Record summary
An RNA of 177 nucleotides, treated with DMS and 2A3 and read out base by base. Values are in units of 0.01, from 0 to 300, in steps of 10. For DMS the reverse transcriptase was MarathonRT. The DMS profile rests on 42,394 reads. Reactivities are given for positions 27 through 126. The 2A3 profile rests on 41,480 reads. It was measured as part of the RMDB library M2PK50.

RNA sequence: GGGAACGACUCGAGUAGAGUCGAAAAAGUUUAGAUUUCGAUCUAAACUAGACCACUAAGAGGAUGACGAGUGACUACGACGCAUCUAGUAGUAUGCGCCCAGCUGUGAGCAGUUCGCUGCUCACAAUAUGUAAUACUAUUUCGAUAGUAUUACAUAAAAAGAAACAACAACAACAAC
Reactivity to DMS in 0.01 (KOAc 150mM, MgCl2 10mM, bicine 150mM(pH8.5), 24C), signal-to-noise 9, nucleotides 027 to 126: a030g010u000u000u000a000g010a010u000u000u010c170g010a020u000c000u000a000a010a000c000u000a060g000a190c040c030a090c090u010a080a090g010a100g010g010a050u000g010a080c050g010a170g010u000g010a090c120u000a060c060g010a130c090g000c030a020u000c020u000a110g010u000a070g010u000a030u000g010c060g000c020c010c060a120g000c170u000g010u000g000a010g010c000a010g010u000u010c230g010c000u000g000c000u000c000a000c010a020a060
Reactivity to 2A3 in 0.01 (KOAc 150mM, MgCl2 10mM, bicine 150mM(pH8.5), 24C), signal-to-noise 9, nucleotides 027 to 126: a000g000u000u000u000a010g000a020u050u040u110c240g050a010u000c000u000a000a000a000c000u000a010g030a040c020c030a020c050u060a070a060g070a050g200g020a040u040g030a050c030g020a020g050u060g070a090c050u060a040c150g110a030c020g000c020a010u010c010u020a020g020u000a010g010u010a060u100g040c030g020c010c010c010a040g040c080u060g000u000g000a000g000c000a010g010u030u090c190g030c090u010g000c000u000c000a000c000a000a000